[RMDB]
RNA sequence: GGGAACGACUCGAGUAGAGUCGAAAAGGAGCUCGGCAAGCUCUUAAUCGUAGGUAGAGCUUGCGUUCGCUCUACCUUACCACCGGAGCGAACAGUAGGGUCGGUGGUAUCGUGACUCUACUGUUAGGGCACGAUACGAUAUUGCUCUAACCGAGCACAUACUCCUACUCUUCGGAGUAGGAGUAUGAAAAGAAACAACAACAACAAC
Reactivity to DMS in 0.01 (KOAc 150mM, MgCl2 10mM, bicine 150mM(pH8.5), 24C), signal-to-noise 1, nucleotides 027 to 156: g000g000a130g010c010u000c020g000g020c000a130a150g000c000u000c010u010u000a060a070u010c070g020u000a080g010g040u000a010g010a010g030c010u000u000g000c120g010u000u000c180g030c020u000c000u000a010c010c000u000u000a050c040c040a060c020c010g050g030a080g000c020g010a070a090c060a180g000u000a070g000g030g000u000c010g020g030u000g000g010u000a030u000c030g030u020g000a080c000u000c010u000a070c100u000g000u000u000a000g010g000g010c000a050c030g000a050u000a050c030g030a090u000a120u010u000g030c010u000c000u000a110a060c040c040g000a060g030c010a140
Reactivity to 2A3 in 0.01 (KOAc 150mM, MgCl2 10mM, bicine 150mM(pH8.5), 24C), signal-to-noise 4, nucleotides 027 to 156: g100g020a090g000c000u000c010g010g040c050a050a030g020c010u000c040u020u050a090a050u040c030g030u040a040g000g040u030a000g010a000g020c000u100u150g080c090g110u120u060c000g000c000u000c000u000a010c010c010u030u040a020c010c020a010c010c040g000g000a000g020c000g030a070a040c040a070g080u110a040g000g040g000u040c020g010g030u060g070g050u040a050u040c030g030u020g140a260c000u010c000u010a040c060u070g150u160u080a010g000g000g000c020a010c020g020a020u040a030c020g000a030u020a080u110u050g000c000u010c010u010a040a050c020c000g010a000g020c010a010
The record gives the reactivity of an RNA of 207 nucleotides to DMS and 2A3. The 2A3 profile rests on 3,449 reads. 2A3 adducts were read by reverse transcription with SuperScript II with manganese. The data come from the RNA Mapping Database (RMDB), library OK3TST. Reactivities are given for positions 27 through 156.